[RMDB]
RNA sequence: GGGAACGACUCGAGUAGAGUCGAAAAUCAACUUCGGUUGACACUUGCCGUAGGAGACCCGCCGGCUGAUGACCAUGGGUGGGACUUCGAAAGAGGUCCGUAACAUCCCAUGCAAGGCUCCGGGUCUCCUAAACGGAACGACCAUAUUCGUAUGGAAACAUUUAUUAACUUUCGAGUUAAUAAAUGUAAAAGAAACAACAACAACAAC
Reactivity to 2A3 in 0.01 (KOAc 150mM, MgCl2 10mM, bicine 150mM(pH8.5), 24C), signal-to-noise 4, nucleotides 027 to 156: u040c010a010a010c020u060u070c220g100g000u010u020g020a030c030a040c180u050u150g010c000c000g000u010a000g010g000a000g000a000c020c010c000g070c100c080g040g000c020u040g060a300u080g010a020c030c010a000u000g000g000g000u010g000g010g000a000c000u000u000c000g010a020a010a000g000a000g000g010u000c010c000g000u000a030a000c020a300u160c010c000c000a000u000g000c010a040a090g000g000c000u000c020c010g000g000g000u010c000u010c000c000u000a000a000a000c000g000g020a020a040c040g080a060c000c020a010u030a040u110u140c210g080u100a040u140g070g000a190a120
Reactivity to DMS in 0.01 (KOAc 150mM, MgCl2 10mM, bicine 150mM(pH8.5), 24C), signal-to-noise 3, nucleotides 027 to 156: u010c010a010a020c020u000u010c260g060g020u010u000g020a040c040a100c060u000u000g010c000c010g060u020a030g010g010a080g020a040c020c000c020g030c150c060g010g020c000u000g020a130u010g010a120c300c020a020u010g000g050g050u010g010g020g030a030c020u010u000c010g000a110a140a240g010a030g030g020u000c010c020g030u000a070a060c110a110u000c000c000c000a050u000g010c030a060a200g010g050c020u000c080c000g020g010g000u000c000u010c010c000u000a000a020a030c010g020g020a080a070c040g000a150c000c010a040u000a060u000u000c110g020u000a060u010g010g010a250a170